[RMDB]
The record gives the reactivity of an RNA of 177 nucleotides to 2A3 and DMS. Values cover nucleotides 27 to 126. The 2A3 profile rests on 12,285 reads. It was measured as part of the RMDB library TTRDEL. For DMS the reverse transcriptase was MarathonRT. The RNA was probed in 150 mM KOAc, 10 mM MgCl2 and 150 mM bicine (pH 8.5) at 24 C.
RNA sequence: GGGAACGACUCGAGUAGAGUCGAAAAGAUAUGGAUGUCAUACUUCAUCGAUCGUCGCUAUGUCGGAAACGACAUAAAAGUCGGGAGAAGUUUGACAUCCUAAGUCAAACCGGCCUUCGGGCCGGAAGUACUAAUUUUACUUCGGUAAAAUUAGUACAAAAGAAACAACAACAACAAC
Reactivity to 2A3 in 0.01 (KOAc 150mM, MgCl2 10mM, bicine 150mM(pH8.5), 24C), signal-to-noise 4, nucleotides 027 to 126: g010a010u040a020u100g000g000a010u000g010u010c000a010u010a050c010u030u020c030a270u300c080g110a080u080c020g080u040c020g050c170u060a010u030g000u000c000g000g000a050a040a040c010g000a000c000a010u020a000a170a010a020g060u050c000g010g020g010a300g010a040a000g010u000u020u020g000a000c000a000u000c000c000u000a010a000g000u000c000a000a050a110c010c000g000g000c020c020u080u140c270g100g000g000c000c000g000g000a010a000
Reactivity to DMS in 0.01 (KOAc 150mM, MgCl2 10mM, bicine 150mM(pH8.5), 24C), signal-to-noise 4, nucleotides 027 to 126: g000a030u000a240u010g000g000a010u000g010u010c000a010u000a010c010u010u000c010a270u010c140g000a040u010c030g010u010c090g020c240u010a010u010g000u000c000g000g000a090a090a120c000g020a000c000a000u000a030a070a160a130g010u000c000g010g000g000a060g010a020a010g000u000u010u000g000a010c000a010u000c000c000u000a000a050g000u000c010a060a120a170c010c000g000g020c000c000u000u010c170g030g020g030c000c000g010g010a000a030